[RMDB]
RNA sequence: GGGAACGACUCGAGUAGAGUCGAAAAGGACUGGCUCAUCCUCGGAAACGGGGGCGGCGGCGUCCGUUCUCUAUUCUUUUCUUUUGAAAGAGGAGACGGGUCUCCGCCCGCCCCCAGCCCCGGGAUAAAACCAGGAUGUUCGCAUCCUGGAAAAGAAACAACAACAACAAC
Reactivity to 2A3 in 0.01 (KOAc 150mM, MgCl2 10mM, bicine 150mM(pH8.5), 24C), signal-to-noise 8, nucleotides 027 to 129: g050g030a030c060u050g030g020c030u010c060a040u030c010c040u080c060g000g020a070a060a050c060g010g000g000g000g000c010g000g000c000g010g000c010g000u000c000c020g010u230u040c000u000c000u010a220u110u040c010u040u080u040u060c060u080u300u160u300g050a010a000a000g000a000g000g010a000g000a000c000g010g020g060u090c030u010c020c000g000c010c020c000g020c000c000c000c000c000a000g000c000c000c010c000g010g000g000a020u110a020a090a010a030
Reactivity to DMS in 0.01 (KOAc 150mM, MgCl2 10mM, bicine 150mM(pH8.5), 24C), signal-to-noise 5, nucleotides 027 to 129: g020g000a160c040u020g000g030c040u020c300a060u030c020c030u020c070g000g030a010a010a020c130g020g030g010g020g040c000g040g000c030g000g050c260g030u000c020c000g030u070u040c010u010c010u040a150u070u000c010u010u010u020u010c100u050u110u060u140g040a000a000a000g040a040g000g000a040g020a020c000g020g050g020u040c020u000c010c010g010c060c060c020g040c010c000c040c010c040a010g000c270c050c020c040g050g030g020a000u050a010a100a100a090